[RMDB]
RNA sequence: GGGAACGACUCGAGUAGAGUCGAAAACGCGGUAAUCCAUUUGUGGAAGAUGGUAAUGUGUCUACGGGGGCAAAGAGAAAGGCGGGGAAGGGAGACGACGACAACAAGAGCGAAAGCCCACCUCCAGGGCAUCAGCUUAUUUCGAUAAGCUGAUGCCAAAAGAAACAACAACAACAAC
Reactivity to 2A3 in 0.01 (KOAc 150mM, MgCl2 10mM, bicine 150mM(pH8.5), 24C), signal-to-noise 3, nucleotides 027 to 126: c030g060c020g010g010u100a100a090u040c000c000a100u020u090u070g130u100g120g120a020a030g010a070u030g040g010u080a060a040u100g130u020g020u130c010u010a050c080g010g000g020g000g040c010a110a070a000g090a000g040a060a070a000g060g020c090g010g000g000g030a030a010g040g000g000a070g010a030c070g000a000c020g060a010c000a070a000c000a020a100g050a010g130c120g010a120a000a000g010c000c000c020a040c010c010u000c010c050a090g080
Reactivity to DMS in 0.01 (KOAc 150mM, MgCl2 10mM, bicine 150mM(pH8.5), 24C), signal-to-noise 1, nucleotides 027 to 126: c080g000c030g000g010u020a070a080u000c000c000a030u000u030u010g020u020g030g040a080a000g000a000u030g000g000u000a110a070u010g000u020g020u050c030u010a140c160g000g000g050g050g040c110a000a100a080g000a070g000a060a110a070g010g000c060g000g010g040g000a000a080g000g000g000a090g000a130c090g000a080c120g000a060c070a080a090c050a040a190g010a030g000c000g000a050a150a100g000c000c000c000a170c020c000u000c070c000a130g000